[RMDB]
RNA sequence: GGGAACGACUCGAGUAGAGUCGAAAAGAUAUGGACGUCGCGUGGGAGGUGUCAAGGUCUUAUUCGGGUCGGAAACGACCCGAAUAAGACCUUGAUACACCGAAGAACACGAUGACGUCCUAAGUCACCUAUUAGCAUUGUUCGCAAUGCUAAUAGGAAAAGAAACAACAACAACAAC
Reactivity to DMS in 0.01 (KOAc 150mM, MgCl2 10mM, bicine 150mM(pH8.5), 24C), signal-to-noise 4, nucleotides 027 to 126: g010a060u010a300u010g000g010a010c010g020u000c010g010c000g020u000g010g000g010a120g020g030u000g010u000c000a010a010g010g010u000c000u010u000a010u000u000c010g030g000g030u010c000g010g000a130a120a270c010g000a020c010c000c000g000a000a000u000a000a010g010a000c000c000u000u000g000a050u000a050c020a010c010c000g000a090a140g000a160a300c010a010c000g000a050u010g010a020c000g010u000c000c000u000a010a080g000u010c040a270